[RMDB]
This 177-nucleotide RNA was probed chemically with 2A3 and DMS.
For 2A3 the reverse transcriptase was SuperScript II with manganese.
For 2A3, 2,721 sequencing reads were counted.
Conditions: 150 mM KOAc, 10 mM MgCl2 and 150 mM bicine (pH 8.5), 24 C.
For DMS the reverse transcriptase was MarathonRT.
RNA sequence: GGGAACGACUCGAGUAGAGUCGAAAAGAUAUGGAUUCUCAUUCUCUUCUUUGAUCUCGGAAACGAGGGAGAAGGGAAUGAGGAAUCCUAAGUCAAAUCAGCAUUUGACUUCGGUCAAAUGCUGAAACAAUGCAACAGCGUUCGCGCUGUUGCAUUGAAAAGAAACAACAACAACAAC
Reactivity to 2A3 in 0.01 (KOAc 150mM, MgCl2 10mM, bicine 150mM(pH8.5), 24C), signal-to-noise 2, nucleotides 027 to 126: g070a030u080a060u180g000g000a010u020u010c010u020c010a010u000u020c020u000c000u070u000c030u230u300u050g170a250u080c000u050c020g000g050a100a080a060c010g000a030g010g010g000a020g020a000a030g000g010g020a000a000u000g000a000g020g030a000a000u020c000c000u030a160a000g030u050c050a010a040a230u030c000a000g050c000a010u000u000u000g000a010c000u070u110c300g000g000u010c000a010a010a000u000g020c000u000g000a000a000a000
Reactivity to DMS in 0.01 (KOAc 150mM, MgCl2 10mM, bicine 150mM(pH8.5), 24C), signal-to-noise 2, nucleotides 027 to 126: g010a050u010a300u020g000g000a010u000u000c000u000c000a050u000u000c000u000c000u000u000c010u000u010u010g010a080u020c000u010c010g030g000a160a060a240c010g020a020g000g010g000a010g000a020a010g010g000g010a000a000u000g000a010g010g000a020a000u010c000c000u000a030a100g010u000c030a050a100a180u000c000a010g000c000a010u000u010u010g000a030c000u000u020c260g010g010u000c000a010a010a010u000g000c010u000g020a000a030a140